Source: RMDB libraries RFM100 and RFMREP, as collected in RNAgym. The record gives the reactivity of an RNA of 177 nucleotides to DMS and 2A3. The RNA was probed in 150 mM KOAc, 10 mM MgCl2 and 150 mM bicine (pH 8.5) at 24 C. For 2A3 the reverse transcriptase was SuperScript II with manganese.

RNA sequence: GGGAACGACUCGAGUAGAGUCGAAAAGAAAGGCGGAAAGUCGAGUUGUUGAAAAAUGACCUGAGAGCAAAAGGCGAGACCCGUAGAUCAGGACGAGCUGGAGUGGGCAACCACGAACGCGAGGACUGAUCCGAGAGGUGUUCGCACCUCUCGGAUCAAAAGAAACAACAACAACAAC
Reactivity to DMS in 0.01 (KOAc 150mM, MgCl2 10mM, bicine 150mM(pH8.5), 24C), signal-to-noise 6, nucleotides 027 to 126: g000a050a120a100g000g000c020g010g010a080a060a060g000u000c030g010a120g000u000u010g000u000u020g000a040a090a070a080a120u020g000a110c030c000u000g000a090g000a090g010c120a050a040a090a080g000g010c020g010a060g010a090c010c020c020g000u020a090g000a090u000c050a020g000g000a090c030g000a190g000c010u000g010g020a300g010u000g000g000g020c280a060a110c000c010a020c010g000a160a190c280g000c010g000a150g000g010a060c070u000
Reactivity to 2A3 in 0.01 (KOAc 150mM, MgCl2 10mM, bicine 150mM(pH8.5), 24C), signal-to-noise 8, nucleotides 027 to 126: g090a020a060a010g030g000c050g060g090a210a050a020g070u080c050g040a030g020u010u030g020u010u010g080a090a040a040a030a050u110g020a060c000c000u030g010a030g010a010g120c050a040a100a070a000g040g000c020g010a030g030a100c000c010c020g050u070a050g010a050u050c010a010g010g020a020c010g010a010g000c010u020g030g000a030g010u020g000g020g000c020a030a040c010c000a000c020g020a030a010c030g000c010g020a030g010g010a010c040u020